RNA sequence: GGGAACGACUCGAGUAGAGUCGAAAAGAUGGAGGGUCUGGCCUCGGACGCCUCCUAUAAGAUGUAACUAUUACGAGGCCAUUAAUGGCGUUUUCGCCUAGGUGCACGACGGCGUGCGUGGCACCGUAAGACUUAAUGAAUAACACGCCGGAUACAACCCAUACUGCUGAUUCGUCAGCAGUAUGGGAAAAGAAACAACAACAACAAC
Reactivity to 2A3 in 0.01 (KOAc 150mM, MgCl2 10mM, bicine 150mM(pH8.5), 24C), signal-to-noise 1, nucleotides 027 to 156: g100a030u190g000g000a000g000g000g000u030c010u020g010g010c000c000u000c000g000g000a040c040g120c010c010u000c020c000u030a050u060a000a010g010a020u130g070u210a140a100c010u010a030u150u080a030c080g000a000g000g000c000c000a000u020u040a030a100u130g010g000c040g120u000u000u190u270c040g000c000c010u000a090g000g000u000g000c000a000c010g010a010c000g060g000c000g000u010g020c000g000u010g020g000c000a000c000c000g000u010a040a060g010a050c000u010u190a050a040u080g040a040a000u140a140a030c000a000c030g000c000c000g030g000a000u020a020c010a020a000
An RNA of 207 nucleotides, treated with 2A3 and read out base by base. Conditions: 150 mM KOAc, 10 mM MgCl2 and 150 mM bicine (pH 8.5), 24 C. 2A3 adducts were read by reverse transcription with SuperScript II with manganese.